[RMDB]
RNA sequence: GGGAACGACUCGAGUAGAGUCGAAAAAAUCAAUGCAAUAAAAAACACAGCAACAACAGCUCUUGUUAGCUAUGAACAAGCCCUGGCUAUUCAGUCGGCAACUCACGCUAACAUAAAUACCACGGCGUUUUUACUAUCAAUUGCUGAGGUUAGACAGGACAGUCCAGUAUUUCGAUACUGGACUGUCAAAAGAAACAACAACAACAAC
Reactivity to 2A3 in 0.01 (KOAc 150mM, MgCl2 10mM, bicine 150mM(pH8.5), 24C), signal-to-noise 1, nucleotides 027 to 156: a000a000u160c060a070a030u230g060c080a090a130u190a120a150a060a030a000a030c050a040c050a090g080c050a030a010c010a040a000c030a090g000c010u010c000u090u000g000u020u000a010g010c030u020a040u060g020a000a000c040a230a000g000c000c010c000u010g000g000c010u010a100u200u140c020a010g010u030c000g090g000c030a070a100c090u060c040a070c060g030c010u000a000a010c010a020u090a060a020a020u070a040c020c010a000c070g040g000c000g050u000u000u070u060u060a030c020u090a060u120c020a060a040u050u080g000c000u000g000a030g070g070u000u030a020g040a130c080a060g090
An RNA of 207 nucleotides, treated with 2A3 and read out base by base. It was measured as part of the RMDB library OK3TST. Values cover nucleotides 27 to 156. For 2A3 the reverse transcriptase was SuperScript II with manganese. The 2A3 profile rests on 508 reads. The reactions ran in a buffer of 150 mM KOAc, 10 mM MgCl2 and 150 mM bicine (pH 8.5), at 24 C. High 2A3 reactivity points to a flexible backbone, as in loops and unpaired stretches.